[RMDB]
RNA sequence: GGGAACGACUCGAGUAGAGUCGAAAAUCUUCUUUCUAAUGUAGUUUGCCAGUUGAUUUAGCUCUUUCUUAAAGUCAUUCGUGAAUCACGAUAGGAAAACCAGGUCAACAGCAUGAAGAUACUUGUCUUCCUAUUUGCUACAGCUGGAGGACAGCAACCUAGUGGAUGCAUUCGUGCAUCCACUAGGAAAAGAAACAACAACAACAAC
Reactivity to DMS in 0.01 (KOAc 150mM, MgCl2 10mM, bicine 150mM(pH8.5), 24C), signal-to-noise 1, nucleotides 027 to 156: u000c020u000u000c030u000u010u000c080u020a000a170u010g010u000a090g000u000u000u000g020c050c030a120g060u000u000g030a050u000u000u000a100g000c090u000c100u030u000u000c000u000u000a060a090a210g030u010c020a100u010u000c110g060u000g000a150a070u000c020a030c010g010a300u000a050g000g010a020a010a000a090c040c060a010g000g000u010c030a060a090c010a160g010c050a180u030g010a050a140g010a040u010a050c130u000u010g050u000c000u070u000c000c080u000a120u000u010u010g020c040u010a140c070a030g010c110u000g020g000a050g010g000a060c020a060g010c030a050a300
Reactivity to 2A3 in 0.01 (KOAc 150mM, MgCl2 10mM, bicine 150mM(pH8.5), 24C), signal-to-noise 5, nucleotides 027 to 156: u000c010u160u030c000u020u100u020c080u140a140a110u140g030u050a090g020u050u040u070g020c010c030a030g010u020u010g030a080u060u060u100a020g000c020u020c000u060u150u050c070u050u160a110a110a040g090u130c040a150u130u120c090g060u080g140a120a050u170c050a040c040g020a000u030a020g030g030a020a030a070a140c010c020a000g000g020u020c010a030a030c020a120g170c080a100u120g040a040a060g020a010u100a300c040u040u040g000u000c000u000u010c000c010u030a070u060u120u190g000c010u040a050c020a070g010c030u030g030g000a020g030g000a010c000a020g000c010a020a060
Structure probing data (DMS and 2A3) for a 207-nucleotide construct.
DMS adducts were read by reverse transcription with MarathonRT.
For 2A3 the reverse transcriptase was SuperScript II with manganese.
For DMS, 1,903 sequencing reads were counted.
The 2A3 profile rests on 2,157 reads.